[RMDB]
Conditions: 150 mM KOAc, 10 mM MgCl2 and 150 mM bicine (pH 8.5), 24 C. The record gives the reactivity of an RNA of 177 nucleotides to DMS and 2A3.
RNA sequence: GGGAACGACUCGAGUAGAGUCGAAAAAGUAAUUGUUAGUGAUAACUCGUAUCGGAAAAUAGGGAAAGGUUAUAGAAGGAUGGAGUUUCUAUAAAGCAUUUACCCUAUCUGUUAUCACCUAACGCAAUUAUCUUACGGUAUUCGUACCGUAAGAUAAAAAAGAAACAACAACAACAAC
Reactivity to DMS in 0.01 (KOAc 150mM, MgCl2 10mM, bicine 150mM(pH8.5), 24C), signal-to-noise 8, nucleotides 027 to 126: a110g010u020a080a090u030u020g010u000u000a020g020u000g000a010u000a010a010c000u000c130g020u020a130u030c160g010g010a090a070a110a030u000a000g000g000g010a050a030a060g010g010u000u000a000u000a000g010a020a020g020g000a170u020g020g020a160g010u030u000u000c000u020a010u000a000a010a060g020c050a120u010u000u010a130c000c000c000u000a000u000c080u010g000u000u000a010u000c000a020c130c090u000a010a010c040g020c300a060a070
Reactivity to 2A3 in 0.01 (KOAc 150mM, MgCl2 10mM, bicine 150mM(pH8.5), 24C), signal-to-noise 9, nucleotides 027 to 126: a000g160u150a050a080u160u110g000u000u010a010g000u000g010a010u000a010a000c020u010c160g110u110a180u210c060g120g030a130a080a010a010u010a010g000g000g000a000a030a010g020g000u020u010a000u000a000g010a010a010g120g090a070u280g130g070a120g110u040u010u000c000u000a010u000a010a040a020g090c050a100u010u020u190a270c000c000c000u000a000u000c030u020g000u010u000a000u000c000a000c030c010u010a020a000c020g000c030a000a040